RNA sequence: GGGAACGACUCGAGUAGAGUCGAAAAGACCCGUAUUCGUACGGGUCAAAACCCUCACGUGGCGCUAUCUGACUGAACUCCCCCAGGGCCGGAAGUCAGCAAGGGUAGGUUGGCUCUGGCGGGUGCGUGGGGGAAAAGUGGACGGUUCGCCGUCCACGCUAGAUUGUCGAUUCGUCGACAAUCUAGCAAAAGAAACAACAACAACAAC
Reactivity to 2A3 in 0.01 (KOAc 150mM, MgCl2 10mM, bicine 150mM(pH8.5), 24C), signal-to-noise 2, nucleotides 027 to 156: g000a000c000c000c000g000u000a030u010u060c070g020u020a000c010g000g000g000u000c000a000a000a010a010c000c000c000u000c000a030c000g030u050g020g000c020g000c040u050a050u280c040u080g050a040c000u040g070a150a180c050u120c050c010c000c000c010a030g030g020g010c010c020g030g090a070a000g010u030c000a010g030c020a030a030g040g000g020u040a040g030g030u010u030g000g020c010u020c000u020g000g000c010g010g000g020u020g000c020g000u000g000g030g000g010g000a000a080a000a050g000u000g000g000a000c010g000g030u040u030c170g010c060c010g000u000c000c000a000c000
This 207-nucleotide RNA was probed chemically with 2A3. For 2A3 the reverse transcriptase was SuperScript II with manganese. Conditions: 150 mM KOAc, 10 mM MgCl2 and 150 mM bicine (pH 8.5), 24 C. It was measured as part of the RMDB library ARCHII.